[RMDB]
RNA sequence: GGGAACGACUCGAGUAGAGUCGAAAACUUACGUGGUUCGCCACGUAAGAAAGUGGAAGAGGAGCGAUGAACCCACAGAAAACAAGACAUCGAAAAAUAAAAAAACACGCUGCUUCGGCAGCGUGAAGUUAAGAUCUUUCUUCGGAAAGAUCUUAACAAAAGAAACAACAACAACAAC
Reactivity to 2A3 in 0.01 (KOAc 150mM, MgCl2 10mM, bicine 150mM(pH8.5), 24C), signal-to-noise 2, nucleotides 027 to 126: c000u000u000a000c000g010u000g010g010u030u030c070g050c050c000a000c000g000u000a000a000g000a030a000a000g050u040g040g030a060a040g030a080g110g120a100g040c010g000a010u020g010a050a100c010c040c020a000c040a050g190a010a090a020a020c070a050a000g070a030c010a030u040c050g100a060a010a010a070a040u240a020a090a010a010a010a000a000c000a010c010g000c000u000g010c000u030u030c190g090g000c030a000g010c000g020u000g000a000a000
Reactivity to DMS in 0.01 (KOAc 150mM, MgCl2 10mM, bicine 150mM(pH8.5), 24C), signal-to-noise 2, nucleotides 027 to 126: c010u000u000a000c000g030u000g020g030u000u010c220g010c000c000a020c000g000u000a000a020g020a080a080a110g020u000g020g010a100a120g010a110g010g010a080g000c020g020a060u000g000a160a150c100c010c020a060c060a090g000a100a030a090a090c090a090a070g010a160c020a000u000c030g010a030a040a050a070a100u060a040a030a020a080a070a070a110c000a000c000g000c000u000g000c000u000u000c180g020g000c000a000g030c000g010u000g010a010a040

An RNA of 177 nucleotides, treated with 2A3 and DMS and read out base by base. The DMS profile rests on 1,550 reads. The data come from the RNA Mapping Database (RMDB), library M2PK50. DMS adducts were read by reverse transcription with MarathonRT. The 2A3 profile rests on 3,364 reads. Values cover nucleotides 27 to 126. High 2A3 reactivity points to a flexible backbone, as in loops and unpaired stretches.